This 177-nucleotide RNA was probed chemically with 2A3 and DMS. The reactions ran in a buffer of 150 mM KOAc, 10 mM MgCl2 and 150 mM bicine (pH 8.5), at 24 C. For DMS, 137,200 sequencing reads were counted.

RNA sequence: GGGAACGACUCGAGUAGAGUCGAAAAGUGACGAGGGCCAGACUGUCCGUGAGAACGGACACGGACGUCCUUAAUCGGCGUGCGCAUAUACUCAGGGAUAAUAUGAGUAUCCCUACGUACGCCGUGACUUGAGCUAUGUAUUCGUACAUGGUUCAAGAAAAGAAACAACAACAACAAC
Reactivity to 2A3 in 0.01 (KOAc 150mM, MgCl2 10mM, bicine 150mM(pH8.5), 24C), signal-to-noise 9, nucleotides 027 to 126: g180u100g070a060c110g020a040g000g020g000c010c000a010g020a080c020u020g000u000c000c000g000u010g020a080g020a040a010c020g010g010a000c000a000c010g010g000a020c020g010u010c000c000u060u070a090a090u090c000g000g000c000g000u000g000c010g000c010a010u030a000u010a300c010u000c010a010g140g030g090a280u170a290a030u090a240u070g010a010g000u000a010u010c010c000c000u000a000c000g000u000a000c000g000c000c000g000u000g000a010
Reactivity to DMS in 0.01 (KOAc 150mM, MgCl2 10mM, bicine 150mM(pH8.5), 24C), signal-to-noise 9, nucleotides 027 to 126: g020u010g010a120c180g010a030g010g010g010c010c030a300g010a150c200u000g010u000c000c000g010u000g000a250g000a220a020c020g000g000a030c000a010c030g000g000a150c230g000u000c000c020u000u000a080a090u000c010g010g010c000g020u000g000c000g000c010a010u010a020u000a000c000u000c010a020g000g010g020a300u010a080a060u010a050u000g000a020g000u000a000u000c000c080c000u000a010c010g010u000a010c000g010c000c000g010u000g000a110